[RMDB]
RNA sequence: GGGAACGACUCGAGUAGAGUCGAAAAGACACGACGGAGACGUCGUGUCAAAGAGUGGGAAACCACUCAAAGAGCCACAGCUUCGGCUGUGGCUCAAGGCGUGGCACCGUCCACGGAGAAAACGGAAGACUAAUUACCGUUUCGACGGUAAUUAGUCAAAAGAAACAACAACAACAAC
Reactivity to DMS in 0.01 (KOAc 150mM, MgCl2 10mM, bicine 150mM(pH8.5), 24C), signal-to-noise 1, nucleotides 027 to 126: g010a020c000a000c010g010a000c010g030g000a280g010a190c020g010u010c020g030u010g010u000c010a000a030a130g000a020g020u010g010g020g010a150a100a260c010c000a030c000u000c020a010a080a090g010a020g020c000c000a010c010a000g000c000u000u010c210g010g040c020u000g000u000g020g010c000u000c000a020a010g030g000c030g060u000g000g010c030a280c000c020g000u000c000c000a010c000g000g000a110g000a070a020a000a010c010g000g010a060a170
Reactivity to 2A3 in 0.01 (KOAc 150mM, MgCl2 10mM, bicine 150mM(pH8.5), 24C), signal-to-noise 1, nucleotides 027 to 126: g010a010c000a010c020g010a000c010g030g000a050g030a040c010g030u010c000g000u000g020u000c000a000a000a010g000a010g020u010g000g010g010a010a060a080c000c000a010c000u020c010a000a030a000g000a000g040c000c000a000c000a000g040c020u090u110c300g160g000c020u010g010u000g000g010c010u000c000a000a000g010g030c040g000u000g010g000c070a040c210c030g060u080c000c000a010c030g040g040a150g040a030a040a000a000c030g000g020a110a060